The record gives the reactivity of an RNA of 207 nucleotides to 2A3 and DMS.
RNA sequence: GGGAACGACUCGAGUAGAGUCGAAAACUCUUUUACUCGGCAUGAUACCACCGUUAUCGGGUCAACAGAGUAGUUGCAAAUGACAACAAUGCUCAGGGUUAUGCUCUCACUGCCUAAUGGCGGUGCGCGGACGACUCAAUGUUCGCAUUGAGUCGAAAGAAGCAUGUGUAUUCGUACACAUGCUUCUAAAAGAAACAACAACAACAAC
Reactivity to 2A3 in 0.01 (KOAc 150mM, MgCl2 10mM, bicine 150mM(pH8.5), 24C), signal-to-noise 5, nucleotides 027 to 156: c030u040c010u050u100u050u140a130c120u090c030g020g000c060a040u090g000a020u090a090c010c010a010c010c030g090u070u090a070u090c050g000g000g030u020c010a030a020c040a040g030a000g020u070a010g010u010u030g040c030a090a190a280u210g060a150c010a030a030c010a050a150u090g000c000u010c040a010g100g000g000u090u100a060u150g030c010u010c010u000c020a000c010u000g000c000c020u260a300a130u300g000g000c000g000g010u020g020c020g010c050g040g020a020c030g010a000c010u000c000a000a010u020g010u040u080c180g000c080a000u000u000g000a000g010u010c010g020a010a040
Reactivity to DMS in 0.01 (KOAc 150mM, MgCl2 10mM, bicine 150mM(pH8.5), 24C), signal-to-noise 3, nucleotides 027 to 156: c050u020c040u010u010u020u000a080c040u000c020g030g050c030a060u000g020a160u000a090c000c020a220c020c020g020u020u010a060u010c050g010g040g000u000c040a070a090c110a150g020a070g020u000a070g010u000u000g000c000a100a130a150u010g000a110c030a040a040c030a060a070u000g000c030u000c030a140g010g000g010u000u000a050u010g000c010u000c030u000c020a030c030u000g050c010c030u000a070a140u000g060g030c000g020g020u020g000c050g010c060g020g000a220c030g010a020c000u000c000a010a000u000g010u000u010c280g000c020a020u000u000g000a050g000u000c020g010a040a060
Conditions: 150 mM KOAc, 10 mM MgCl2 and 150 mM bicine (pH 8.5), 24 C. For DMS the reverse transcriptase was MarathonRT. Reactivities are rounded to 0.1 and cut off at 0 and 3. For DMS, 5,955 sequencing reads were counted.